[RMDB]
RNA sequence: GGGAACGACUCGAGUAGAGUCGAAAAAGGGAGAAAGCAUUGAGAUCAUCGGCUUUGUCAUACCUGGGCUUCAGUGGUUCAUUGGAAAGUCGACAAGUUCAGGACAAGUGGGCUUUGUCCCCACCAGCUUAUAACAGUGCUUCGGCACUGUUAUAAGAAAAGAAACAACAACAACAAC
Reactivity to 2A3 in 0.01 (KOAc 150mM, MgCl2 10mM, bicine 150mM(pH8.5), 24C), signal-to-noise 5, nucleotides 027 to 126: a000g040g010g000a040g030a010a040a000g020c050a050u080u160g040a050g040a120u090c040a030u030c070g030g000c010u070u040u040g090u100c020a020u040a150c000c030u010g000g030g010c050u160u120c100a090g020u090g120g050u090u050c030a030u050u060g100g050a080a050a030g040u020c010g010a010c040a100a020g010u030u050c020a010g030g090a080c030a050a070g060u140g040g110g000c010u030u070u050g130u100c020c010c010c010a010c000c000a010g080
Reactivity to DMS in 0.01 (KOAc 150mM, MgCl2 10mM, bicine 150mM(pH8.5), 24C), signal-to-noise 5, nucleotides 027 to 126: a120g010g010g010a030g010a030a030a020g010c020a140u010u010g010a090g000a070u000c120a150u000c040g010g000c020u000u000u000g010u000c060a080u000a130c140c060u010g000g000g010c060u000u000c170a090g030u010g010g010u000u000c060a090u010u010g000g000a050a030a050g020u000c020g010a030c140a060a060g000u000u000c020a070g000g010a120c110a060a080g000u020g010g010g000c030u000u000u010g000u000c030c000c010c030a120c010c060a130g010

Chemical mapping of a 177-nucleotide RNA with 2A3 and DMS. The RNA was probed in 150 mM KOAc, 10 mM MgCl2 and 150 mM bicine (pH 8.5) at 24 C. The data come from the RNA Mapping Database (RMDB), library OK2TST. For DMS the reverse transcriptase was MarathonRT. For 2A3 the reverse transcriptase was SuperScript II with manganese. 2A3 is a SHAPE reagent: it acylates the 2'-hydroxyl of flexible nucleotides of all four kinds.